An RNA of 177 nucleotides, treated with DMS and read out base by base.
RNA sequence: GGGAACGACUCGAGUAGAGUCGAAAAACGUUUCGAUGAGGAAGUUACUGCAUUUUCGAUCUGCGACAUAUCAGCCCCCUCAAAGAUCAAACAAGGAUCGUUUCGCAGAGAAUACAACAGAUUUAUGUGGCAAUCAAGUAUUCGUACUUGAUUGCCAAAAAGAAACAACAACAACAAC
Reactivity to DMS in 0.01 (KOAc 150mM, MgCl2 10mM, bicine 150mM(pH8.5), 24C), signal-to-noise 2, nucleotides 027 to 126: a040c120g040u010u000u000c030g000a190u020g000a170g010g000a100a120g010u000u000a110c020u020g020c070a090u010u000u000u000c040g010a100u030c020u000g000c140g000a050c250a060u000a050u010c080a170g000c050c010c000c000c030u000c030a020a080a120g000a030u020c040a080a040a060c170a070a210g020g000a030u010c100g040u010u000u010c030g000c020a020g000a020g000a090a040u000a030c150a070a070c050a040g000a190u000u010u000a070u000g020